[RMDB]
RNA sequence: GGGAACGACUCGAGUAGAGUCGAAAAUCUGUUGGAACUCCUGCGUGAAAGGAUCUGUCUUUCUAAGUCUCUUCAAGCUGCUCUAACAAAGUACCAUAGAGCGGAUGGCUUAAAUAACACAUAUGUCACGUCCUUAACGCUUCGGCGUUAAGGACGUAAAAGAAACAACAACAACAAC
Reactivity to DMS in 0.01 (KOAc 150mM, MgCl2 10mM, bicine 150mM(pH8.5), 24C), signal-to-noise 1, nucleotides 027 to 126: u000c070u000g010u030u000g020g000a070a090c090u000c000c030u000g000c040g000u000g010a070a100a090g000g000a020u000c060u020g000u000c060u000u000u010c060u010a060a090g000u000c010u000c090u040u020c240a090a100g000c080u010g000c020u010c030u020a030a100c180a060a080a120g020u010a100c140c100a160u000a030g020a030g080c000g020g010a010u000g030g010c070u060u000a050a020a090u030a050a090c110a080c180a090u000a020u000g020u000c070
Structure probing data (DMS) for a 177-nucleotide construct. The RNA was probed in 150 mM KOAc, 10 mM MgCl2 and 150 mM bicine (pH 8.5) at 24 C. The DMS profile rests on 550 reads.